This 177-nucleotide RNA was probed chemically with 2A3 and DMS. 2A3 adducts were read by reverse transcription with SuperScript II with manganese. Reactivities are given for positions 27 through 126. The reactions ran in a buffer of 150 mM KOAc, 10 mM MgCl2 and 150 mM bicine (pH 8.5), at 24 C. For 2A3, 3,218 sequencing reads were counted.
RNA sequence: GGGAACGACUCGAGUAGAGUCGAAAAGGCCACCAGCCCGCAGAGCAGCCCGAUGCCCAGAGCGAUGCCCGCGCUCGCCCCAGCACUCAGCUGUGUCUCUAGCACCCGCUCUCGGUAGCAGAGGAGGCUUACCUGCAAUGUUCGCAUUGCAGGUAAGAAAAGAAACAACAACAACAAC
Reactivity to 2A3 in 0.01 (KOAc 150mM, MgCl2 10mM, bicine 150mM(pH8.5), 24C), signal-to-noise 1, nucleotides 027 to 126: g040g000c050c000a010c000c000a020g040c040c020c030g000c030a010g020a010g010c010a020g010c030c000c030g020a040u070g000c000c050c000a010g010a000g020c020g030a040u130g050c000c000c030g020c020g030c020u020c020g040c000c030c010c000a000g020c020a020c040u130c050a040g010c020u030g020u030g090u070c020u010c010u010a040g020c030a040c000c040c010g020c020u000c010u020c020g050g030u060a040g000c050a010g020a030g010g040a030g070g000
Reactivity to DMS in 0.01 (KOAc 150mM, MgCl2 10mM, bicine 150mM(pH8.5), 24C), signal-to-noise 4, nucleotides 027 to 126: g020g010c020c020a080c060c030a100g000c020c020c030g000c100a070g010a120g000c040a120g010c030c020c030g010a110u010g010c020c020c040a100g000a060g020c040g000a100u010g000c030c020c020g000c050g000c030u000c020g010c060c000c010c010a120g000c030a070c100u010c080a080g010c030u010g010u010g000u000c020u010c030u000a070g000c050a090c030c030c030g000c040u000c030u000c070g030g010u010a080g030c050a050g000a090g010g010a100g000g010